This 207-nucleotide RNA was probed chemically with 2A3. 2A3 adducts were read by reverse transcription with SuperScript II with manganese.
RNA sequence: GGGAACGACUCGAGUAGAGUCGAAAAACUCGCGAUGAGUGGGGGCGCUUUCGUCGUGCCGAGGGUUGGCUACUCGGCGGGAGUCUCCGGCUCGGGCUCCGGUUCGGGAGUCGGCUCCGGCUCCGGAGCGGCCUUCCAGGUCGGCGCCUCGUAGCUGACCUGAAACGAUGUUCGCAUCGUUUCAGGUAAAAGAAACAACAACAACAAC
Reactivity to 2A3 in 0.01 (KOAc 150mM, MgCl2 10mM, bicine 150mM(pH8.5), 24C), signal-to-noise 2, nucleotides 027 to 156: a000c020u010c000g030c030g100a170u230g010a060g030u090g000g000g010g090g000c030g000c030u140u170u300c070g080u090c060g020u080g100c010c020g030a190g020g120g030u070u050g010g000c010u070a180c000u190c010g020g000c000g000g020g000a000g030u030c060u090c170c030g070g080c110u100c030g010g000g010c000u000c000c030g160g010u240u280c000g000g000g000a010g020u010c010g030g020c000u000c000c000g040g010c030u020c050c000g000g000a010g000c000g000g090c010c000u140u050c000c010a000g040g000u020c000g030g020c000g010c010c030u030c040g030u020a000g020c000u020g030

The reactions ran in a buffer of 150 mM KOAc, 10 mM MgCl2 and 150 mM bicine (pH 8.5), at 24 C.